[RMDB]
RNA sequence: GGGAACGACUCGAGUAGAGUCGAAAAGAUAUGGAAAGUGAGCGCUGACAUGGACGAAUUCGGAAACGAACUAUCCAUGGUGGAGCUCCCUUUCCUAAGUCAAAACAAAGUCGUUCGCGACUUUGAACGAUACAGGUACCUUCGGGUACCUGUAUCGAAAAGAAACAACAACAACAAC
Reactivity to 2A3 in 0.01 (KOAc 150mM, MgCl2 10mM, bicine 150mM(pH8.5), 24C), signal-to-noise 1, nucleotides 027 to 126: g010a000u080a050u110g010g020a000a040a010g010u010g000a000g020c060g000c110u130g040a010c010a000u020g020g020a020c050g050a260a300u040u000c010g040g020a040a060a050c010g020a020a020c070u040a010u000c000c000a000u030g020g060u030g030g000a010g000c000u000c020c000c010u020u030u000c000c010u000a040a020g000u020c080a100a000a020a060c000a000a070a000g000u020c020g030u100u190c300g000c010g220a030c000u050u000u020g030a070a040
Reactivity to DMS in 0.01 (KOAc 150mM, MgCl2 10mM, bicine 150mM(pH8.5), 24C), signal-to-noise 3, nucleotides 027 to 126: g000a050u000a300u010g000g010a010a000a010g000u000g000a000g020c000g010c000u010g000a040c000a010u000g000g000a010c130g020a050a130u000u000c000g010g000a130a100a230c000g000a000a010c070u000a230u000c000c000a010u000g000g000u000g000g000a050g000c000u000c000c070c000u000u000u000c000c000u000a000a050g000u010c030a090a080a070a240c010a000a000a000g020u000c010g030u000u010c180g040c020g010a000c010u000u000u000g010a070a120